Chemical mapping of a 177-nucleotide RNA with 2A3 and DMS. The reactions ran in a buffer of 150 mM KOAc, 10 mM MgCl2 and 150 mM bicine (pH 8.5), at 24 C. For DMS the reverse transcriptase was MarathonRT. Reactivities are given for positions 27 through 126.

RNA sequence: GGGAACGACUCGAGUAGAGUCGAAAAAGGAUACGAGGUUACGCAGUGUAAUAACGUGGUUGUUUUAGGGUUUAGAUACUGCAUUGCCUCUUCAAUAUCGCUAAGUUUGCUUACGCCAAGGCUUAAGCGUACAAGGACGCUUCGGCGUCCUUGUACGAAAAGAAACAACAACAACAAC
Reactivity to 2A3 in 0.01 (KOAc 150mM, MgCl2 10mM, bicine 150mM(pH8.5), 24C), signal-to-noise 1, nucleotides 027 to 126: a000g140g020a060u080a050c030g010a010g000g010u020u000a010c010g010c000a030g000u020g040u060a090a160u110a120a040c160g160u190g010g010u140u090g030u180u190u020u120a180g070g010g060u020u000u030a060g040a040u060a010c000u010g040c040a000u000u050g030c000c060u000c000u000u080c010a030a010u000a000u050c030g020c100u010a120a130g000u050u110u190g020c030u010u090a030c020g000c020c090a060a020g060g000c000u020u010a040a000g040
Reactivity to DMS in 0.01 (KOAc 150mM, MgCl2 10mM, bicine 150mM(pH8.5), 24C), signal-to-noise 2, nucleotides 027 to 126: a080g000g000a060u000a030c190g010a020g010g010u000u010a060c190g010c000a020g010u010g000u000a060a080u000a020a010c050g010u010g010g010u010u000g010u000u010u030u000a160g030g040g010u000u000u000a090g010a080u000a000c000u010g010c010a130u000u010g010c000c000u000c010u060u000c150a060a090u000a030u000c060g020c040u000a070a100g000u000u010u010g000c020u000u010a070c130g000c050c100a050a080g060g030c050u000u000a030a070g000